[RMDB]
RNA sequence: GGGAACGACUCGAGUAGAGUCGAAAAGAUAUGGACGGACGGUACCGAGCGAAGAACAUGGAUCGGAAACGAUCCAUGGGAGCUCGUAUUCCGUCCUAAGUCAAAGAGUACGCCUUCGGGCGUACUCCACUCUAUUUUAGUUCGCUAAAAUAGAGUGAAAAGAAACAACAACAACAAC
Reactivity to 2A3 in 0.01 (KOAc 150mM, MgCl2 10mM, bicine 150mM(pH8.5), 24C), signal-to-noise 6, nucleotides 027 to 126: g000a010u030a010u070g020g000a000c010g000g000a010c120g140g160u170a170c210c140g000a000g020c010g300a300a020g000a010a000c000a000u010g000g000a000u000c000g000g000a020a000a000c000g000a000u010c050c000a000u000g000g000g000a000g010c000u010c010g010u040a130u100u050c000c000g000u000c000c000u000a000a000g000u000c020a060a100a070g000a000g000u000a000c000g010c000c000u050u160c300g090g010g000c000g000u000a000c000u000c000
Reactivity to DMS in 0.01 (KOAc 150mM, MgCl2 10mM, bicine 150mM(pH8.5), 24C), signal-to-noise 9, nucleotides 027 to 126: g010a020u000a050u010g000g000a030c030g010g010a040c300g020g010u010a070c300c030g000a010g020c000g010a080a110g000a120a180c010a000u000g000g000a010u000c000g010g000a030a010a040c000g010a010u000c000c000a000u000g000g000g000a020g010c010u000c000g000u000a120u010u000c000c000g000u000c000c000u000a000a050g000u000c020a110a090a170g000a010g010u000a000c000g010c000c000u000u010c270g020g000g020c000g000u000a000c000u000c000